[RMDB]
RNA sequence: GGGAACGACUCGAGUAGAGUCGAAAAGGGGUCCUCGUUGAAACCGCGUAGGCUGAUGACCUAUACUGAAGCCUCCACGGUAUAGCAAGGCCUACCGGUGGAGAGGACGGAGGCACCCAAACAAUCGAGUGUUCGAUUCGUCGAACACUCGAUUGAAGAUCCUAUCUCCGUUCGCGGAGAUAGGAUCAAAAGAAACAACAACAACAAC
Reactivity to 2A3 in 0.01 (KOAc 150mM, MgCl2 10mM, bicine 150mM(pH8.5), 24C), signal-to-noise 2, nucleotides 027 to 156: g040g020g030g060u050c000c020u020c010g120u150u040g020a000a010a000c000c010g020c140g020u010a010g000g030c000u010g020a270u010g010a020c010c000u000a000u000a010c010u040g050a110a000g000c000c000u000c000c000a010c000g010g010u000a010u000a010g000c030a300a300g000g000c000c000u000a000c000c000g010g010u000g000g000a020g000a000g000g000a000c020g010g000a000g000g040c010a050c000c010c010a080a100a070c000a000a000u000c000g000a010g000u000g010u000u020c010g020a020u040u080c190g060u000c000g090a020a000c000a000c000u000c000g000a000u000u000g000a000a000